Chemical mapping of a 177-nucleotide RNA with 2A3 and DMS.
RNA sequence: GGGAACGACUCGAGUAGAGUCGAAAAAUAAACCGCGUAGGGAACCAAGCCUUCAGUUCUGGAGACCCACGGUACAAGGCUUGGUUCUAGACAUGUGGGUCUCCAGUCCCACUCCCUACGCCAAAAACUAUCUGAGGAUGUUCGCAUCCUCAGAUAGAAAAGAAACAACAACAACAAC
Reactivity to 2A3 in 0.01 (KOAc 150mM, MgCl2 10mM, bicine 150mM(pH8.5), 24C), signal-to-noise 1, nucleotides 027 to 126: a000u050a010a080a010c070c050g020c000g000u000a010g050g000g010a020a040c060c060a110a040g090c010c040u170u240c040a090g010u050u050c000u000g000g000a000g000a000c000c000c000a000c020g010g000u080a140c080a090a060g030g000c040u120u170g080g000u020u010c000u000a000g010a020c040a070u210g000u020g000g000g000u030c000u000c000c000a000g000u000c000c000c000a040c040u000c020c000c000u000a010c010g000c000c000a020a190a000a020a010
Reactivity to DMS in 0.01 (KOAc 150mM, MgCl2 10mM, bicine 150mM(pH8.5), 24C), signal-to-noise 1, nucleotides 027 to 126: a190u020a070a050a100c100c100g050c000g020u010a020g010g000g010a080a130c120c110a110a080g000c060c030u010u000c230a070g000u010u000c000u010g000g010a070g000a020c000c040c020a040c030g000g000u060a040c040a030a010g010g000c000u050u020g050g030u040u000c010u000a130g010a070c040a050u010g020u000g010g010g000u000c010u000c010c000a010g000u000c000c000c040a180c170u000c000c000c010u000a010c010g010c000c100a000a030a020a020a080

For DMS, 941 sequencing reads were counted. It was measured as part of the RMDB library M2PK90. The reactions ran in a buffer of 150 mM KOAc, 10 mM MgCl2 and 150 mM bicine (pH 8.5), at 24 C.